[RMDB]
RNA sequence: GGGAACGACUCGAGUAGAGUCGAAAAGUGAAAGCUCCUUCUCUCGCAAUGUGUAACUCAUGAUUCUCAUGACCCCUGGUUGGAGAGAUCCGGACUAGGAGCCUGGGGGCCUCUGAUUCUGCCAGCCAAAACUGUCGUAAGUUCGCUUACGACAGAAACUUUACCCCAGGUUCGCCUGGGGUAAAGUAAAAGAAACAACAACAACAAC
Reactivity to 2A3 in 0.01 (KOAc 150mM, MgCl2 10mM, bicine 150mM(pH8.5), 24C), signal-to-noise 1, nucleotides 027 to 156: g010u030g050a140a010a010g000c010u050c010c030u060u060c030u020c000u010c070g100c100a100a160u120g060u050g050u160a070a010c080u010c000a050u030g090a100u270u030c070u030c050a010u100g030a060c010c000c010c060u030g040g000u010u040g050g000a000g000a010g000a000u030c090c090g000g040a040c010u030a040g030g010a000g020c020c070u040g000g000g000g010g010c010c030u070c030u000g110a150u050u060c060u070g050c020c010a050g040c040c010a050a070a070a100c000u000g000u000c030g000u000a000a000g030u010u120c180g000c120u000u000a000c000g010a000c000a000g000a000a010